[RMDB]
RNA sequence: GGGAACGACUCGAGUAGAGUCGAAAACAAAGUCUGUUCCACUGAUCUUUCAGACUAGAUGUCAUACUACAUACUGAGGGGUAAUGCCUGGCUAUUGUACCAAUUCUUAGGGUGCACAGAACCAAGAAGGCUAGUGUAAGUUCGCUUACACUAGCCUAAAAGAAACAACAACAACAAC
Reactivity to 2A3 in 0.01 (KOAc 150mM, MgCl2 10mM, bicine 150mM(pH8.5), 24C), signal-to-noise 1, nucleotides 027 to 126: c010a000a070a050g050u000c020u040g070u130u000c040c000a040c070u060g080a040u050c040u080u160u090c030a010g060a060c010u100a060g050a200u180g000u050c030a030u030a150c040u000a020c080a090u080a080c010u000g000a030g090g040g000g040u070a110a000u090g060c010c010u040g030g000c020u050a030u140u080g020u040a110c020c000a040a050u100u080c080u010u050a080g060g050g040u000g020c030a020c000a030g050a070a030c010c070a070a060g030a090
Reactivity to DMS in 0.01 (KOAc 150mM, MgCl2 10mM, bicine 150mM(pH8.5), 24C), signal-to-noise 2, nucleotides 027 to 126: c090a140a120a040g020u000c020u000g010u000u000c030c030a170c120u010g000a060u000c030u000u000u000c030a040g000a010c060u000a050g010a110u020g020u000c090a060u000a060c130u010a080c050a090u010a120c020u000g020a110g010g000g000g020u020a040a090u000g010c050c000u010g010g020c010u010a030u000u010g000u010a060c020c040a130a080u000u010c120u010u000a120g000g010g010u000g000c030a080c180a050g000a040a090c000c040a060a060g000a080